Source information: Chemical mapping of a 177-nucleotide RNA with 2A3 and DMS. The reactions ran in a buffer of 150 mM KOAc, 10 mM MgCl2 and 150 mM bicine (pH 8.5), at 24 C. DMS adducts were read by reverse transcription with MarathonRT. It was measured as part of the RMDB library OK2TRN. The 2A3 profile rests on 1,444 reads.
RNA sequence: GGGAACGACUCGAGUAGAGUCGAAAACGGAAUGGCAGUGGCGAUAGUCCAUGGCGGAAAGACGUUGUAUGCCAAAGGGUUCGGUGUCAGAGACGUGGGCAAAGGUGGUGGUCCGGACAACAAGGUGAAUGAUAGCAACGUUCGCGUUGCUAUCAUUAAAAGAAACAACAACAACAAC
Reactivity to 2A3 in 0.01 (KOAc 150mM, MgCl2 10mM, bicine 150mM(pH8.5), 24C), signal-to-noise 1, nucleotides 027 to 126: c060g060g030a150a060u080g020g040c000a010g080u020g040g000c020g080a110u060a060g060u000c000c020a060u060g040g040c030g000g090a140a080a000g000a000c050g000u050u100g090u150a110u110g040c000c000a050a050a010g110g000g000u070u040c000g050g000u050g010u020c040a000g040a000g000a080c080g060u090g000g030g000c040a090a050a040g060g000u050g050g000u040g000g000u010c020c020g010g000a010c010a060a000c020a070a050g160g020u150g170
Reactivity to DMS in 0.01 (KOAc 150mM, MgCl2 10mM, bicine 150mM(pH8.5), 24C), signal-to-noise 2, nucleotides 027 to 126: c060g010g010a090a080u000g020g020c020a080g030u000g010g020c030g000a120u010a070g020u000c020c030a080u000g020g020c050g000g010a070a110a130g000a120c070g000u010u000g010u010a080u000g000c000c020a030a100a100g000g000g020u000u000c080g020g020u010g010u000c070a050g010a130g010a040c100g020u020g000g000g010c050a060a070a100g000g010u000g000g010u010g000g000u000c010c030g000g000a060c090a030a070c090a080a110g010g020u020g000